Record summary: The data come from the RNA Mapping Database (RMDB), library TTRINS. Structure probing data (DMS) for a 177-nucleotide construct.

RNA sequence: GGGAACGACUCGAGUAGAGUCGAAAAGAUAUGGACGGUGAACUACGCUUGGAUCAUCGAAGAACUAAAGUUGAGUCGGAAACGACUCAACUUUAGGGAGAUGCGCACAAGCGCACCGUCCUAAGUCCAGUGAUCGUAGGUUCGCCUACGAUCACUGAAAAGAAACAACAACAACAAC
Reactivity to DMS in 0.01 (KOAc 150mM, MgCl2 10mM, bicine 150mM(pH8.5), 24C), signal-to-noise 1, nucleotides 027 to 126: g000a050u020a300u030g000g000a000c030g000g000u000g000a090a100c120u000a300c030g010c000u000u000g000g000a260u020c020a010u000c020g000a210a130g000a180a140c000u000a000a000a000g030u000u000g000a030g020u040c000g030g030a110a050a300c000g060a030c000u030c000a000a000c000u000u000u010a000g000g000g000a110g000a000u000g020c210g020c300a220c090a000a010g000c000g020c000a000c000c000g000u020c000c000u000a000a020g000u000c030
For DMS, 729 sequencing reads were counted.